[RMDB]
RNA sequence: GGGAACGACUCGAGUAGAGUCGAAAAGUGUUGGAUUGUUCACCCGGUAAUGAGGAACGUGAGAUGGGUUUAGACCGUCGUGAGACAGGUUAGUUUUACCCUACUGUAAGUAUUUUUGAGUGAACUUUGAUAGUACGAGAGGAACUCUAAGUGAUGACUAAAAGCGUAAGUUCGCUUACGCUUUUAGAAAAGAAACAACAACAACAAC
Reactivity to DMS in 0.01 (KOAc 150mM, MgCl2 10mM, bicine 150mM(pH8.5), 24C), signal-to-noise 4, nucleotides 027 to 156: g010u010g020u000u000g020g000a170u010u010g020u000u000c010a080c030c020c020g000g000u010a060a090u010g000a120g010g020a080a090c090g030u000g030a120g010a120u010g020g010g010u000u010u000a130g010a040c000c000g020u000c010g010u000g010a300g000a030c000a050g050g000u000u010a080g000u010u000u000u000a070c020c010c010u000a120c060u010g010u000a060a100g000u000a050u020u010u000u010u000g010a100g020u000g020a060a060c030u010u000u000g020a120u010a050g020u010a070c060g000a150g010a150g020g020a080a080c080u000c040u010a040a080g010u000g020a100u000g000a230
Reactivity to 2A3 in 0.01 (KOAc 150mM, MgCl2 10mM, bicine 150mM(pH8.5), 24C), signal-to-noise 3, nucleotides 027 to 156: g070u040g000u090u040g070g030a030u060u050g010u080u030c080a030c000c030c010g000g000u120a120a030u150g040a040g030g020a060a020c020g020u070g030a070g010a070u060g030g000g030u040u070u030a020g020a010c050c000g020u020c000g010u050g040a040g000a010c080a070g010g000u010u040a030g030u010u050u070u130a050c000c000c040u040a060c030u030g050u110a050a050g060u040a210u050u060u020u060u130g060a060g010u050g030a000a000c000u040u030u000g000a020u040a050g040u030a000c040g010a020g020a010g060g050a050a000c030u000c020u030a040a020g010u040g120a080u070g030a060

The data come from the RNA Mapping Database (RMDB), library PDB130. Structure probing data (DMS and 2A3) for a 207-nucleotide construct. 2A3 adducts were read by reverse transcription with SuperScript II with manganese. Reactivities are given for positions 27 through 156. 2A3 is a SHAPE reagent: it acylates the 2'-hydroxyl of flexible nucleotides of all four kinds. For DMS, 10,922 sequencing reads were counted.